[RMDB]
RNA sequence: GGGAACGACUCGAGUAGAGUCGAAAAGCCGUCCAGGUCAGCUCCUGGGAACGAGUCAACACAGAGACGUACACAUAGCUGCUCCAGGUUGGCACCGUCAGGGCACAAAGCGACAGGAUCACAAGCCAGGUCUGAUGAGGCAUCUUGCCGCAGUGCCGCAUUUCCGCUAAUUCGUUAGCGGAAAUGCAAAAGAAACAACAACAACAAC
Reactivity to 2A3 in 0.01 (KOAc 150mM, MgCl2 10mM, bicine 150mM(pH8.5), 24C), signal-to-noise 1, nucleotides 027 to 156: g020c000c010g040u030c000c010a050g040g040u070c030a020g000c030u030c050c050u000g000g020g000a010a090c080g040a030g020u010c020a070a040c060a060c020a140g040a010g060a130c010g040u150a050c110a000c020a170u190a070g020c030u070g030c030u050c000c010a080g130g000u030u030g050g010c020a060c100c030g040u040c070a100g010g000g100c040a010c020a000a140a030g030c030g000a020c030a000g000g030a000u040c010a040c020a190a090g050c040c070a050g050g160u120c070u160g110a300u170g110a120g010g010c010a030u000c010u030u040g000c040c000g030c000a000g020u000g000c000c000
The data come from the RNA Mapping Database (RMDB), library OK3TST. This 207-nucleotide RNA was probed chemically with 2A3.